RNA sequence: GGGAACGACUCGAGUAGAGUCGAAAAGCCGGGCGCGUGUUCCAGCCCGAGAUCGAAGUCGACGACGCGACAGUCCUCCGCCUCGAGGGCGUGUUGGACGACCGCCUCGUUCUCCUCGGGGGCGAAGCACGUUCAGCGGUUUCGACCGCUGAACGUGAAAAGAAACAACAACAACAAC
Reactivity to 2A3 in 0.01 (KOAc 150mM, MgCl2 10mM, bicine 150mM(pH8.5), 24C), signal-to-noise 1, nucleotides 027 to 126: g070c000c000g020g050g000c100g000c030g060u200g040u080u020c040c020a030g060c030c000c030g010a040g010a060u180c040g080a130a030g100u060c080g020a040c000g000a000c020g010c000g040a010c050a000g000u000c000c000u000c000c000g040c030c000u090c130g200a270g030g140g070c050g010u160g000u000u000g010g020a010c070g020a030c040c000g030c010c000u000c000g020u060u020c010u030c010c010u000c000g030g000g000g030g000c070g010a010a010g100
Reactivity to DMS in 0.01 (KOAc 150mM, MgCl2 10mM, bicine 150mM(pH8.5), 24C), signal-to-noise 2, nucleotides 027 to 126: g040c050c010g010g000g010c070g060c120g000u020g000u000u000c040c040a300g010c010c000c000g020a040g000a040u020c090g000a090a070g020u000c160g010a040c000g000a020c300g000c010g000a090c200a240g040u000c010c000u000c020c020g010c000c030u000c250g010a110g020g000g000c000g030u000g010u010u010g000g010a070c020g000a080c240c020g000c010c080u000c020g010u000u000c080u000c020c050u000c020g000g000g000g000g000c030g010a100a150g010